This 207-nucleotide RNA was probed chemically with 2A3 and DMS. Values cover nucleotides 27 to 156. For 2A3, 6,794 sequencing reads were counted. Source: RMDB library OK3TST, as collected in RNAgym.

RNA sequence: GGGAACGACUCGAGUAGAGUCGAAAACACGUGUGGCGGAAAGAUCAACUCAAUCUGAGGUAACGAUGCAGACACAAGUGGAACUCGAACUGGAAGCCUACCAAUUUGGUAAGGCUCGCAUGGCCGCAGCUAUGCGGGGCAACGAGGAGAAGGGCCGAUAUUCCUAAGAGUUCGCUCUUAGGAAUAUAAAAGAAACAACAACAACAAC
Reactivity to 2A3 in 0.01 (KOAc 150mM, MgCl2 10mM, bicine 150mM(pH8.5), 24C), signal-to-noise 7, nucleotides 027 to 156: c070a020c040g050u040g010u030g060g000c040g020g050a110a080a050g060a070u050c050a040a090c020u040c050a080a210u070c110u150g030a020g010g040u070a060a040c070g020a040u100g020c030a010g030a070c020a010c010a070a090g010u030g030g020a030a020c020u010c050g030a070a040c030u040g020g060a050a010g020c000c010u000a020c010c010a180a300u170u150u220g020g000u080a110a080g010g000c010u010c000g000c000a010u020g010g000c030c040g070c140a040g000c020u040a020u070g010c000g000g000g000g020c020a060a060c060g010a020g000g010a040g010a040a040g030g010g000c010c020g010
Reactivity to DMS in 0.01 (KOAc 150mM, MgCl2 10mM, bicine 150mM(pH8.5), 24C), signal-to-noise 5, nucleotides 027 to 156: c030a040c060g020u000g020u010g010g010c030g010g010a070a090a120g020a100u000c040a060a090c030u000c030a100a150u000c160u010g010a060g030g000u010a070a100c060g000a150u000g020c030a110g020a050c030a060c030a020a070g010u010g010g010a060a060c020u000c020g010a050a100c050u010g010g010a080a080g010c010c000u000a050c000c010a080a210u010u000u000g050g020u010a050a090g020g000c000u000c010g000c010a030u000g010g010c000c120g020c170a110g010c020u000a030u000g000c000g010g010g000g030c040a050a080c040g010a080g000g000a110g010a070a080g000g010g010c030c030g010